[RMDB]
RNA sequence: GGGAACGACUCGAGUAGAGUCGAAAAGAAAACGGCAGCAAGCCGAGCAAGUAGAGCAACGCGAGCAAGAUCAGCAACGCGAGCAACAUGAGCAACAUGAGCAUGAUCAGCAACUACAGCAAAAAAAACUAUGCUUGAACUUCGGUUCAAGCAUAGUAAAAGAAACAACAACAACAAC
Reactivity to DMS in 0.01 (KOAc 150mM, MgCl2 10mM, bicine 150mM(pH8.5), 24C), signal-to-noise 1, nucleotides 027 to 126: g030a130a110a050a060c150g000g000c010a000g040c120a090a130g000c000c010g060a000g040c000a130a210g000u020a070g040a120g020c030a140a070c050g000c060g070a150g000c000a050a100g020a090u040c060a060g020c000a060a050c060g040c050g000a130g030c020a050a080c060a040u000g000a150g000c060a040a010c120a060u000g000a040g000c000a010u000g000a100u010c030a120g020c050a010a050c050u000a000c150a000g080c060a000a000a000a030a130a000a110
Reactivity to 2A3 in 0.01 (KOAc 150mM, MgCl2 10mM, bicine 150mM(pH8.5), 24C), signal-to-noise 1, nucleotides 027 to 126: g080a010a150a000a000c010g000g020c000a030g040c080a230a000g050c040c000g000a030g040c020a050a030g050u090a010g020a010g000c020a020a080c030g050c010g050a010g020c040a110a040g020a150u140c040a000g000c050a090a030c070g050c050g090a030g000c000a000a060c030a080u160g070a060g010c040a000a030c000a110u070g020a020g000c000a050u120g040a130u070c000a010g000c020a070a000c010u060a050c020a020g050c060a130a000a000a000a090a000a000

About this RNA: Structure probing data (DMS and 2A3) for a 177-nucleotide construct. The 2A3 profile rests on 888 reads. DMS adducts were read by reverse transcription with MarathonRT. 2A3 is a SHAPE reagent: it acylates the 2'-hydroxyl of flexible nucleotides of all four kinds. Source: RMDB library M2PK90, as collected in RNAgym.